[RMDB]
RNA sequence: GGGAACGACUCGAGUAGAGUCGAAAACUUUUCGCAAACGAAAUCUUUAGCCAGUUCAAUCCAUGCCUGAAUCAAUUCAGGAUCAACUUUCUUGAAUGCUGGCGCGAUUUUAUAAAUUUGCUCUAGGAUCUCAAUAUCGCCAUAAAUUUCAUCAACCCCUUGGAUAUGUAUUCGUACAUAUCCAAGGAAAAGAAACAACAACAACAAC
Reactivity to 2A3 in 0.01 (KOAc 150mM, MgCl2 10mM, bicine 150mM(pH8.5), 24C), signal-to-noise 7, nucleotides 027 to 156: c010u060u030u190u230c060g000c020a020a020a020c030g030a030a010a000u010c010u080u280u160a060g000c010c000a000g000u050u070c040a040a050u070c080c070a090u170g040c000c000u020g020a030a040u160c080a150a260u160u010c010a000g000g020a030u070c020a020a150c040u120u300u180c040u050u080g060a090a040u150g050c010u000g000g000c000g000c010g000a000u000u020u050u020a100u060a070a140a070u010u000u030g010c010u010c030u050a050g040g030a140u030c030u010c040a060a100u140a080u190c080g050c060c010a050u140a150a130a070u170u210u190c070a100u140c040a040a090c000c040
Reactivity to DMS in 0.01 (KOAc 150mM, MgCl2 10mM, bicine 150mM(pH8.5), 24C), signal-to-noise 2, nucleotides 027 to 156: c040u010u000u010u010c070g000c050a020a050a090c090g010a030a040a010u000c000u000u000u020a150g030c000c000a020g020u000u000c060a050a170u010c050c030a050u000g010c040c030u010g000a060a150u000c140a130a140u000u000c010a020g000g020a070u000c070a100a170c110u000u010u000c020u030u000g000a040a030u000g010c000u000g010g030c000g020c160g020a000u000u000u010u000a100u000a070a110a130u000u000u000g020c020u000c050u010a070g020g000a070u000c030u000c020a100a110u000a080u000c020g010c000c010a080u000a060a140a160u020u010u000c030a120u010c080a090a160c100c090